[RMDB]
RNA sequence: GGGAACGACUCGAGUAGAGUCGAAAAUACGCCAAUUUCGAUUGGCGUAACACGCAAACCGGCCGAAAGGCAUUAUAUGCGUACGGUGGCGAAAGCCUAAAAACGCACUGUCAUUCGUGACAGUGAACGACUGGGUAAAUUUCGAUUUACCCAGUCGAAAAGAAACAACAACAACAAC
Reactivity to DMS in 0.01 (KOAc 150mM, MgCl2 10mM, bicine 150mM(pH8.5), 24C), signal-to-noise 2, nucleotides 027 to 126: u000a010c000g000c000c000a010a000u000u000u020c170g010a020u000u000g000g010c010g000u000a020a010c200a030c030g000c000a000a060a170c050c100g040g000c000c000g000a140a060a080g000g000c000a030u000u010a000u010a090u010g000c000g060u000a100c240g020g050u000g000g000c000g000a110a120a170g010c010c000u000a000a050a070a090a110c250g030c010a000c000u000g000u000c000a060u000u020c150g000u000g000a020c010a000g000u000g000a040a120
Reactivity to 2A3 in 0.01 (KOAc 150mM, MgCl2 10mM, bicine 150mM(pH8.5), 24C), signal-to-noise 2, nucleotides 027 to 126: u070a000c000g000c000c000a010a010u010u060u150c220g150a020u000u010g000g000c010g010u000a000a030c020a000c040g020c000a080a000a000c010c000g040g000c020c000g100a130a040a020g010g020c000a000u090u090a010u010a000u020g040c000g030u000a070c110g210g050u090g020g020c000g050a080a020a030g000c000c000u100a100a030a000a020a000c070g010c020a000c000u010g000u000c010a030u080u010c160g060u010g010a000c000a010g010u000g000a010a040